[RMDB]
Structure probing data (2A3 and DMS) for a 177-nucleotide construct. Conditions: 150 mM KOAc, 10 mM MgCl2 and 150 mM bicine (pH 8.5), 24 C. The 2A3 profile rests on 1,425 reads. The DMS profile rests on 930 reads. For DMS the reverse transcriptase was MarathonRT.
RNA sequence: GGGAACGACUCGAGUAGAGUCGAAAACAUAGCGAGUGUGAACGGUCAAUCCGGCCAACUAAAGCUUUCAUAAUGGUCAUAAGGCGGCUGACCAACGGUCUCCACUGUGAAGCACAAAUAGCGGGAUUACUAUGUGUACGUUCGCGUACACAUAGUAAAAAGAAACAACAACAACAAC
Reactivity to 2A3 in 0.01 (KOAc 150mM, MgCl2 10mM, bicine 150mM(pH8.5), 24C), signal-to-noise 1, nucleotides 027 to 126: c060a000u170a020g020c010g050a040g070u050g040u060g130a060a030c000g000g040u000c010a020a040u030c030c040g080g000c050c020a010a020c020u140a150a060a000g020c040u070u070u080c030a030u060a280a050u170g020g000u060c050a030u030a210a000g050g000c020g030g000c030u010g040a060c000c010a010a020c060g030g050u050c000u030c040c040a020c020u020g040u050g070a100a010g040c000a000c030a080a120a030u110a020g000c080g000g020g020a030u000
Reactivity to DMS in 0.01 (KOAc 150mM, MgCl2 10mM, bicine 150mM(pH8.5), 24C), signal-to-noise 2, nucleotides 027 to 126: c090a110u010a060g020c020g000a070g030u000g040u010g000a040a090c060g000g010u000c110a070a090u000c070c020g010g050c050c050a050a130c080u010a090a060a110g000c010u010u000u010c110a060u010a080a040u020g030g000u020c020a060u000a030a090g000g010c080g000g010c130u000g020a010c050c040a040a100c160g010g010u010c010u010c100c030a080c050u000g030u000g000a030a100g040c020a070c070a060a090a050u000a050g010c040g010g000g000a140u000